[RMDB]
Background: An RNA of 177 nucleotides, treated with DMS and 2A3 and read out base by base. It was measured as part of the RMDB libraries RFM100 and RFMREP. Conditions: 150 mM KOAc, 10 mM MgCl2 and 150 mM bicine (pH 8.5), 24 C.
RNA sequence: GGGAACGACUCGAGUAGAGUCGAAAAGACCACAUGCAUUGAUGAGUUGAAGUCGGUUAUAAGCUUAAAUACAGAACAUACCCGUUGUUAUUAAAGCUACCAACCGACUUCAGAUCAUACUUUGCAUCUAGGUAACUUCAUUCGUGAAGUUACCUAGAAAAGAAACAACAACAACAAC
Reactivity to DMS in 0.01 (KOAc 150mM, MgCl2 10mM, bicine 150mM(pH8.5), 24C), signal-to-noise 2, nucleotides 027 to 126: g000a240c000c040a120c300a130u000g010c010a000u000u000g020a020u000g000a010g020u000u010g010a010a000g000u000c000g000g000u000u000a030u000a080a130g000c000u000u000a080a050a030u000a050c160a070g000a020a110c110a200u030a120c230c200c070g000u010u000g010u010u000a030u000u000a090a000a020g000c010u000a190c290c190a000a000c000c000g010a010c000u000u000c000a000g020a040u000c020a000u000a070c020u000u000u020g000c010a010u000
Reactivity to 2A3 in 0.01 (KOAc 150mM, MgCl2 10mM, bicine 150mM(pH8.5), 24C), signal-to-noise 9, nucleotides 027 to 126: g070a020c010c000a030c020a090u040g000c000a000u010u000g000a010u000g000a000g060u050u010g010a000a000g000u000c000g010g010u020u010a080u020a150a040g000c000u020u020a040a040a000u060a030c050a030g220a130a030c040a110u230a210c050c070c070g090u060u040g080u060u010a020u010u040a070a040a010g000c010u000a040c030c030a000a000c000c000g000a000c000u000u000c000a000g000a000u000c000a000u050a300c000u000u000u000g000c000a010u000